RNA sequence: GGGAACGACUCGAGUAGAGUCGAAAAGGUGCCCCAGGGCAUGGGGUGGGUGAGCGCGGAGGCAUACAUGCCACAGAUAUCGUAUACAUAGAGGGGCUCUUCGAGGAUGCCGAUGUAAGUGGGAUAACAGCGCCCCCCUCUGAUGCUUGCUCGCACAAGCUUAUGAUGGAUUCGUCCAUCAUAAGCUAAAAGAAACAACAACAACAAC
Reactivity to 2A3 in 0.01 (KOAc 150mM, MgCl2 10mM, bicine 150mM(pH8.5), 24C), signal-to-noise 1, nucleotides 027 to 156: g050g040u060g020c000c000c000c090a000g150g030g040c010a010u070g000g020g000g110u100g000g030g000u050g030a080g030c030g000c000g020g030a030g030g000c030a040u060a190c100a050u110g080c000c010a050c020a010g050a020u120a040u120c070g000u090a080u010a070c090a030u210a000g050a040g010g100g070g000c010u000c070u090u150c030g000a050g080g000a100u140g090c050c080g030a020u040g010u130a090a020g040u020g000g000g060a040u000a130a100c050a020g020c030g020c020c000c000c000c000c000u010c010u010g050a060u020g000c030u020u000g000c000u010c020g050c000a050c000a030
Chemical mapping of a 207-nucleotide RNA with 2A3. The 2A3 profile rests on 635 reads. The reactions ran in a buffer of 150 mM KOAc, 10 mM MgCl2 and 150 mM bicine (pH 8.5), at 24 C.